The record gives the reactivity of an RNA of 177 nucleotides to DMS. The data come from the RNA Mapping Database (RMDB), library TTRINS.
[RMDB]
RNA sequence: GGGAACGACUCGAGUAGAGUCGAAAAGAUAUGGAGAACUAGGGACCUGGCUUCAACAGCUUCAGUAUCGGAAACGAUAUGGAAGACAUGAAGCUUGUACAGGAUAGUCCCUAGUUCUCCUAAGUCACCUAUAAAGAUCGUUCGCGAUCUUUAUAGGAAAAGAAACAACAACAACAAC
Reactivity to DMS in 0.01 (KOAc 150mM, MgCl2 10mM, bicine 150mM(pH8.5), 24C), signal-to-noise 3, nucleotides 027 to 126: g000a010u000a030u000g000g000a020g010a000a020c000u000a010g010g020g020a010c010c190u010g020g010c000u000u000c010a010a110c290a140g000c030u000u000c000a160g030u010a000u000c000g030g000a010a010a020c000g030a010u000a010u000g000g010a000a000g000a090c080a160u010g000a030a010g000c000u000u010g030u010a160c300a100g030g020a190u010a120g010u000c000c000c000u000a000g000u000u000c000u000c000c000u000a000a040g010u000c010a300

For DMS the reverse transcriptase was MarathonRT.